Notes: This 177-nucleotide RNA was probed chemically with 2A3 and DMS. The 2A3 profile rests on 1,797 reads. Conditions: 150 mM KOAc, 10 mM MgCl2 and 150 mM bicine (pH 8.5), 24 C. Source: RMDB library OK1LIB, as collected in RNAgym. As a SHAPE reagent, 2A3 marks flexible, mostly unpaired nucleotides at the ribose 2'-OH.
RNA sequence: GGGAACGACUCGAGUAGAGUCGAAAAGGAAAGAAACGCCCAAGAAUAACGUUAGUUACCCCUCCAAGGCUAUUACCCAUUGUUGCUGUUAAGACUAAGACCCAGGGAUGGCUGACGCCGGAGACCAGACCUAAUUAGUCUUCGGACUAAUUAGGUCAAAAGAAACAACAACAACAAC
Reactivity to 2A3 in 0.01 (KOAc 150mM, MgCl2 10mM, bicine 150mM(pH8.5), 24C), signal-to-noise 2, nucleotides 027 to 126: g070g020a060a090a010g050a020a080a010c020g010c000c000c060a030a040g080a020a070u230a040a010c080g050u010u070a040g020u000u090a130c000c000c000c000u000c000c020a050a020g030g010c010u050a050u120u130a100c000c000c020a020u030u060g010u030u010g000c010u000g010u040u050a110a010g060a040c050u020a090a000g040a010c000c010c000a000g030g040g020a050u020g000g000c000u010g010a020c040g000c020c000g000g010a030g000a000c000c050a000
Reactivity to DMS in 0.01 (KOAc 150mM, MgCl2 10mM, bicine 150mM(pH8.5), 24C), signal-to-noise 3, nucleotides 027 to 126: g020g000a070a100a070g010a070a110a070c100g000c000c020c020a080a040g010a120a100u020a030a060c040g000u010u000a130g010u000u020a100c040c010c020c020u000c040c050a060a130g000g000c030u020a040u010u020a080c010c000c020a100u010u000g000u000u000g000c030u000g000u000u000a060a130g030a110c070u020a060a060g000a070c020c010c000a080g000g000g000a060u000g000g000c050u000g000a060c150g030c020c020g010g000a110g010a090c080c050a120